RNA sequence: GGGAACGACUCGAGUAGAGUCGAAAAGGCUUUUUGACUUUAAUUGUCGGCGUCCACACUGAUUUUCAAAAGCUGGAUGAUCUUUGUCGGGUCCAGCGAUGCCGUGGCGAAGAUCGAAGCGAAAGUAUCGUAUGCGAUAUUUCGAUAUCGCAUACGAAAAAGAAACAACAACAACAAC
Reactivity to 2A3 in 0.01 (KOAc 150mM, MgCl2 10mM, bicine 150mM(pH8.5), 24C), signal-to-noise 1, nucleotides 027 to 126: g040g010c000u120u050u090u090u070g050a070c000u040u120u100a090a040u140u120g050u040c010g040g060c010g060u000c040c000a040c000a010c070u130g130a130u140u080u190u180c040a060a190a050a000g000c010u010g010g050a080u110g020a020u060c030u000u050u060g030u020c020g000g010g040u090c050c000a050g040c050g020a030u130g020c050c100g070u020g010g060c030g010a000a020g020a000u020c030g030a050a010g050c000g040a030a020a040g080u070a040
Reactivity to DMS in 0.01 (KOAc 150mM, MgCl2 10mM, bicine 150mM(pH8.5), 24C), signal-to-noise 2, nucleotides 027 to 126: g010g010c140u000u000u000u000u000g000a070c020u010u000u000a070a120u000u010g010u010c030g010g040c050g020u000c010c060a050c130a100c240u030g010a120u000u020u000u010c120a050a060a060a190g000c010u000g000g010a120u000g000a060u000c020u000u000u020g020u000c050g020g010g020u000c090c030a140g030c120g020a050u010g030c060c050g000u030g030g020c020g000a010a010g000a020u000c020g000a190a040g030c020g010a080a060a100g010u000a140